An RNA of 177 nucleotides, treated with 2A3 and DMS and read out base by base. 2A3 adducts were read by reverse transcription with SuperScript II with manganese. It was measured as part of the RMDB library TTRINS. Reactivities are rounded to 0.1 and cut off at 0 and 3. The reactions ran in a buffer of 150 mM KOAc, 10 mM MgCl2 and 150 mM bicine (pH 8.5), at 24 C. For 2A3, 20,302 sequencing reads were counted.
RNA sequence: GGGAACGACUCGAGUAGAGUCGAAAAGAUAUGGACUCAUGACCUUCUGAUGACCUAUACUAAGGGUCAACUCUAUCGGAAACGAUAGAGUUGACCUAUGUAUAGCAAGGAAGGUGAGUCCUAAGUCCAACAUUAUUAUGUUCGCAUAAUAAUGUUGAAAAGAAACAACAACAACAAC
Reactivity to 2A3 in 0.01 (KOAc 150mM, MgCl2 10mM, bicine 150mM(pH8.5), 24C), signal-to-noise 6, nucleotides 027 to 126: g060a040u140a070u260g000g000a010c000u010c040a140u300g300a170c030c000u020u010c020u020g300a300u170g070a130c010c030u000a000u010a010c030u070a160a300g150g000g000u000c000a010a000c000u000c000u000a000u010c000g080g020a140a090a060c000g000a010u010a010g010a000g000u000u000g000a000c000c000u000a000u000g000u000a000u000a000g010c010a080a130g000g000a010a000g000g000u010g000a000g000u000c000c000u030a090a040g040u020c020
Reactivity to DMS in 0.01 (KOAc 150mM, MgCl2 10mM, bicine 150mM(pH8.5), 24C), signal-to-noise 9, nucleotides 027 to 126: g000a090u000a300u010g000g010a010c000u000c020a190u010g040a160c010c000u000u000c000u000g000a130u010g010a120c300c000u000a000u000a000c000u020a110a300g010g020g010u000c000a000a000c000u000c000u000a000u010c000g010g000a110a090a190c000g020a010u010a010g010a010g000u000u000g010a010c010c010u010a020u000g000u000a000u000a000g010c030a050a130g000g000a010a000g010g020u000g010a010g000u000c000c000u000a000a070g010u000c030